Chemical mapping of a 177-nucleotide RNA with DMS and 2A3. Source: RMDB library TTRDEL, as collected in RNAgym. The RNA was probed in 150 mM KOAc, 10 mM MgCl2 and 150 mM bicine (pH 8.5) at 24 C. High 2A3 reactivity points to a flexible backbone, as in loops and unpaired stretches. Values cover nucleotides 27 to 126. For 2A3 the reverse transcriptase was SuperScript II with manganese.
RNA sequence: GGGAACGACUCGAGUAGAGUCGAAAAGAUAUGGAGAUGAGCGAUAAGAUGGGUAUCGGAAACGAUACCACAUCUUUUGACGCUCGCUCCUAAGUCAAAGCAGCUUGAAGUUCGCUUCAAGCUGCAAUCAUUUAAAUUCCUUCGGGAAUUUAAAUGAAAAAGAAACAACAACAACAAC
Reactivity to DMS in 0.01 (KOAc 150mM, MgCl2 10mM, bicine 150mM(pH8.5), 24C), signal-to-noise 5, nucleotides 027 to 126: g010a020u000a300u010g000g000a010g010a050u010g010a000g020c000g020a100u010a020a010g010a010u000g000g010g010u000a000u000c000g010g010a100a090a150c000g010a010u000a000c000c000a030c000a000u000c010u000u010u010u000g020a190c040g000c000u000c010g000c000u000c000c000u000a020a090g000u000c030a090a090a190g010c010a010g010c000u000u000g000a020a020g010u000u010c230g020c000u000u000c000a000a000g000c000u000g000c000a010a020
Reactivity to 2A3 in 0.01 (KOAc 150mM, MgCl2 10mM, bicine 150mM(pH8.5), 24C), signal-to-noise 3, nucleotides 027 to 126: g010a010u070a040u110g010g000a020g090a210u190g000a000g020c010g040a050u050a230a040g000a010u030g010g000g010u010a000u000c000g000g000a040a030a010c010g000a000u010a000c000c010a010c000a010u000c000u040u030u030u030g040a010c010g000c000u010c010g010c000u010c000c000u010a160a010g020u020c060a150a070a040g000c000a000g000c010u000u010g010a000a000g010u080u160c180g140c120u010u000c000a000a000g000c000u000g000c000a000a000